[RMDB]
RNA sequence: GGGAACGACUCGAGUAGAGUCGAAAAGUCACGUGGUACGCCACGUGACAACCGGAAACGGAGAUGACGAUCGGGCGCAUCUGUUGAAAAACUAAACGCCAAAGCGAGGAGUUACGACUCCUCGCAACCGUAUACUGGGUUUCGACCCAGUAUACGGAAAAGAAACAACAACAACAAC
Reactivity to DMS in 0.01 (KOAc 150mM, MgCl2 10mM, bicine 150mM(pH8.5), 24C), signal-to-noise 2, nucleotides 027 to 126: g010u000c000a000c000g030u000g000g000u010a040c190g050c000c000a000c030g000u010g000a020c000a020a050c000c000g000g000a050a040a010c070g000g030a080g000a100u000g020a100c030g000a120u040c080g000g010g010c020g060c110a170u000c030u000g000u000u000g000a070a070a040a110a110c060u000a060a170a120c050g000c030c010a090a100a040g050c000g000a000g000g030a040g020u000u000a190c290g000a030c000u000c000c000u000c000g020c000a000a020
Reactivity to 2A3 in 0.01 (KOAc 150mM, MgCl2 10mM, bicine 150mM(pH8.5), 24C), signal-to-noise 2, nucleotides 027 to 126: g000u000c000a000c010g000u020g000g040u040a020c200g070c010c000a000c000g010u000g000a000c000a000a000c000c010g010g040a040a030a050c030g040g040a080g000a100u090g090a050c050g040a050u100c050g020g000g000c060g000c020a050u000c060u020g010u020u050g130a100a050a040a010a010c110u170a200a000a000c040g020c020c030a050a050a000g000c030g000a000g010g000a000g000u000u060a110c260g070a050c080u010c000c000u010c000g000c010a000a000
Structure probing data (DMS and 2A3) for a 177-nucleotide construct.